[RMDB]
RNA sequence: GGGAACGACUCGAGUAGAGUCGAAAAAGGAACUAUCCAAAGACACCCUUUUAAAAGGUUCUUACAAUUUGGAAGUUUACGAUGAUAAGUUGGCAGAUUAUGCGCUUCCCAGUUAUAAUGACUAUGAUAUACCAGGGUGAUUCGUCACCCUGGUAUAAAAAGAAACAACAACAACAAC
Reactivity to DMS in 0.01 (KOAc 150mM, MgCl2 10mM, bicine 150mM(pH8.5), 24C), signal-to-noise 2, nucleotides 027 to 126: a150g010g000a030a050c010u000a140u020c000c010a020a010a020g010a140c140a060c050c000c000u010u010u000u020a020a130a110a060g000g000u010u000c060u010u010a130c140a070a110u010u010u000g010g010a030a040g000u000u000u000a060c060g020a110u000g000a230u010a040a090g000u010u010g040g040c000a020g020a120u000u010a060u010g020c010g010c100u000u000c000c000c010a120g000u020u000a050u020a090a060u020g000a090c040u010a050u000g010a120